[RMDB]
RNA sequence: GGGAACGACUCGAGUAGAGUCGAAAAGAUAUGGAUCGGACGUGAGAGCAUCGAUCUAUGGUGGUAGCUGUAUAUCGGAAACGAUAUACCGAAACCAUAGGGAGCUCUCACGGUACGAUCCUAAGUCGAUAAACACUGAGUUCGCUCAGUGUUUAUCAAAAGAAACAACAACAACAAC
Reactivity to 2A3 in 0.01 (KOAc 150mM, MgCl2 10mM, bicine 150mM(pH8.5), 24C), signal-to-noise 5, nucleotides 027 to 126: g040a030u140a060u270g010g000a000u010c020g010g040a020c000g010u010g000a020g000a000g000c020a230u300c050g080a040u040c020u010a000u010g020g010u030g010g140u110a080g060c240u130g030u000a010u010a010u000c020g030g040a070a040a060c010g000a000u000a000u010a000c020c000g040a120a020a000c000c000a000u000a000g000g000g000a000g000c000u010c000u000c010a000c010g000g000u030a000c000g000a000u000c000c000u000a020a010g020u030c070
Reactivity to DMS in 0.01 (KOAc 150mM, MgCl2 10mM, bicine 150mM(pH8.5), 24C), signal-to-noise 5, nucleotides 027 to 126: g010a090u000a300u010g000g000a010u000c000g000g000a170c020g020u000g010a020g010a010g030c010a300u000c200g000a050u000c010u000a000u000g000g010u000g030g000u030a210g000c290u000g020u000a000u000a000u010c000g010g010a160a110a210c000g010a000u000a020u000a010c000c020g010a210a230a020c010c010a020u000a010g000g000g000a020g000c000u000c000u000c000a000c010g010g000u010a040c010g000a010u000c000c000u000a010a110g010u000c110
Structure probing data (2A3 and DMS) for a 177-nucleotide construct.
Conditions: 150 mM KOAc, 10 mM MgCl2 and 150 mM bicine (pH 8.5), 24 C.
The DMS profile rests on 6,798 reads.
The 2A3 profile rests on 17,839 reads.
Source: RMDB library TTRINS, as collected in RNAgym.